[RMDB]
RNA sequence: GGGAACGACUCGAGUAGAGUCGAAAACUAGGGGCAUUUCCUGAUAUUCAAGACAUGUAGUUAUGGACAAAUAAAUAAGAUAUGCUUCAAAUUCAAACUUUUGGAGGUUAUAUCUUCCAAGAGUUCAUAUCUACUGAAAAAAGAUAACAAUAUUAAAUCAUAUUAUGAGAUUCGUCUCAUAAUAUGAAAAAGAAACAACAACAACAAC
Reactivity to 2A3 in 0.01 (KOAc 150mM, MgCl2 10mM, bicine 150mM(pH8.5), 24C), signal-to-noise 2, nucleotides 027 to 156: c040u040a060g000g000g040g010c050a090u110u140u050c010c000u040g060a030u000a090u100u160c090a020a000g060a070c000a010u120g050u000a000g000u010u040a000u000g000g030a000c000a000a300a050u070a130a080a100u150a080a050g000a000u000a030u000g000c020u010u000c000a000a000a070u170u000c000a000a300a250c060u100u000u000u020g030g000a000g000g010u010u070a030u000a000u040c000u050u000c010c000a040a050g060a010g020u000u000c010a000u000a010u000c000u000a000c010u020g090a020a030a000a020a050a050g170a010u300a030a050c020a010a030u300a070u300u300a050a300a300
Structure probing data (2A3) for a 207-nucleotide construct. For 2A3, 455 sequencing reads were counted. The reactions ran in a buffer of 150 mM KOAc, 10 mM MgCl2 and 150 mM bicine (pH 8.5), at 24 C.